[RMDB]
RNA sequence: GGGAACGACUCGAGUAGAGUCGAAAACAAUCGCCUUGGUUAUUUCGUGUUGUUUUAACUGAACCUCGACAUAAGCCUUUUGGAUCGAAGGUUAAACGAUCCGCUCCUCGCUUGAGCUUGAGGCGGCGUAUCUCUUAUGUCAACAGAGACACUUUGGUCUAUGGUUGUAUAACAAUAGAUAGACUCUCGUUUGCAAGAUUAGGGUUAACAGAUCUUGCCGUUAGUCUGGUUAGCGCGUAACCGGCCUUGAUUUAUGGAAUAGAUAAAGGCAAGUCUUCGGACUUGCCAAAAGAAACAACAACAACAAC
Reactivity to 2A3 in 0.01 (KOAc 150mM, MgCl2 10mM, bicine 150mM(pH8.5), 24C), signal-to-noise 4, nucleotides 027 to 266: c010a000a090u100c060g080c040c040u120u160g040g020u150u060a160u120u260u180c070g040u060g000u060u030g010u000u020u030u060a140a040c030u060g030a030a040c000c040u050c090g020a010c000a040u040a030a040g030c000c000u080u090u140u230g170g110a110u130c060g020a020a020g050g040u140u270a080a080a000c040g000a000u020c070c010g010c000u010c000c000u020c030g080c040u100u190g170a070g080c050u070u140g030a000g030g010c070g000g010c000g010u040a030u030c050u000c000u000u010a010u070g020u000c020a040a020c050a090g060a000g010a050c020a020c150u130u110u160g140g020u020c010u030a040u080g020g010u020u030g050u090a120u030a130a020c020a040a020u040a100g120a050u050a030g010a010c000u010c000u000c020g040u020u280u150g000c000a000a000g000a000u050u090a110g110g070g190u160u240a090a020c030a050g020a050u000c000u010u010g000c000c010g020u020u000a000g010u000c000u000g000g030u080u110a030g010c010g000c030g070u010a030a000c050c000g040g060c000c000u060u130g080a100u050u130u140a160u180g070g030a070a030u160a210g190a050u280a170a100a170
Reactivity to DMS in 0.01 (KOAc 150mM, MgCl2 10mM, bicine 150mM(pH8.5), 24C), signal-to-noise 4, nucleotides 027 to 266: c060a140a080u020c160g010c040c030u010u000g010g000u000u000a040u010u010u010c060g000u000g000u000u000g000u000u000u000u000a060a080c070u010g010a070a080c070c040u010c180g000a030c040a020u000a060a070g010c000c000u000u000u000u000g020g000a050u010c060g020a010a010g000g010u000u020a020a070a110c060g000a020u000c020c000g020c030u000c000c040u000c060g000c060u010u010g000a090g000c050u010u000g010a020g010g010c100g020g000c080g020u020a020u010c040u000c020u010u000a030u010g010u000c050a060a100c200a090g010a050g010a060c110a080c170u000u020u010g010g020u000c020u000a060u000g020g010u000u000g010u000a050u010a040a040c030a040a030u010a080g020a090u000a010g000a020c000u000c020u000c010g010u000u010u010g010c000a020a010g000a010u000u010a110g010g010g010u010u010a070a100c130a180g000a000u000c020u000u000g020c020c020g000u000u010a010g000u000c000u010g010g000u000u000a080g030c060g000c290g010u010a030a040c030c040g010g010c010c080u000u010g000a090u000u010u010a030u010g000g000a100a140u000a070g010a100u010a030a110a170
Chemical mapping of a 307-nucleotide RNA with 2A3 and DMS. For DMS, 10,061 sequencing reads were counted. The RNA was probed in 150 mM KOAc, 10 mM MgCl2 and 150 mM bicine (pH 8.5) at 24 C. Values cover nucleotides 27 to 266.